[RMDB]
RNA sequence: GGGAACGACUCGAGUAGAGUCGAAAAGAUAUGGAAACGAGCAACAGCUGAGGUGUCGGAAACGACACUCAGACAUGCUCCAAAACAACACUUCCUAAGUCAAAACGCGAACCUUCGGGUUCGCGAAGAAUAAUCCUGAGUUCGCUCAGGAUUAUUCAAAAGAAACAACAACAACAAC
Reactivity to 2A3 in 0.01 (KOAc 150mM, MgCl2 10mM, bicine 150mM(pH8.5), 24C), signal-to-noise 2, nucleotides 027 to 126: g020a030u250a030u180g030g020a090a050a120c100g000a000g000c020a000a110c060a230g060c020u010g010a040g020g300u050g000u030c010g030g000a040a050a020c020g000a020c010a020c000u010c000a000g030a050c010a050u030g000c000u000c020c010a030a120a010a040c060a070a020c050a030c110u030u000c010c010u030a120a050g140u100c090a030a090a040a190c010g000c000g000a000a020c020c000u060u080c270g050g000g000u050u000c020g000c000g000a000a000
Reactivity to DMS in 0.01 (KOAc 150mM, MgCl2 10mM, bicine 150mM(pH8.5), 24C), signal-to-noise 3, nucleotides 027 to 126: g020a110u000a150u010g000g000a060a080a280c290g010a010g000c000a020a060c240a170g000c000u000g000a000g000g000u030g010u000c000g010g010a090a080a220c010g020a000c000a010c000u000c000a010g000a030c070a170u010g020c010u020c010c090a070a070a110a090c070a030a090c180a100c150u000u000c010c000u000a060a130g000u000c180a030a040a090a110c010g000c000g000a010a000c010c000u000u020c200g010g010g030u000u000c040g010c020g010a010a020
This 177-nucleotide RNA was probed chemically with 2A3 and DMS. It was measured as part of the RMDB library TTRDEL. The reactions ran in a buffer of 150 mM KOAc, 10 mM MgCl2 and 150 mM bicine (pH 8.5), at 24 C. The DMS profile rests on 2,059 reads. For DMS the reverse transcriptase was MarathonRT.